[RMDB]
RNA sequence: GGGAACGACUCGAGUAGAGUCGAAAAGUUACCAAAAACCCACAACAACAAUCUCAGCAACACCACUACCAGAUCUACUUACCCAAGUCGAAAGUGUAACACCAGGUCUUAAUAGAUAUUCUACAGCAAAUGUAGGAAAUUACACCAUCUAUUACACUCAUGUCCGAUGUUUCGACAUCGGACAUGAAAAAGAAACAACAACAACAAC
Reactivity to 2A3 in 0.01 (KOAc 150mM, MgCl2 10mM, bicine 150mM(pH8.5), 24C), signal-to-noise 1, nucleotides 027 to 156: g000u000u040a110c000c000a000a000a000a080a140c000c040c030a030c080a140a000c020a040a020c030a090a060u020c020u000c050a040g040c020a040a120c000a010c030c040a000c010u050a020c010c010a000g000a080u030c020u000a030c010u010u120a100c040c000c000a010a020g030u010c060g170a120a100a070g020u000g000u060a040a020c060a050c070c010a040g040g010u020c030u060u080a020a020u060a020g010a020u060a030u030u030c020u020a000c000a040g070c060a300a000a180u100g000u000a000g010g110a000a100a020u120u060a020c010a020c160c020a000u000c020u060a000u110u110a020c030a000c060
Chemical mapping of a 207-nucleotide RNA with 2A3. The reactions ran in a buffer of 150 mM KOAc, 10 mM MgCl2 and 150 mM bicine (pH 8.5), at 24 C.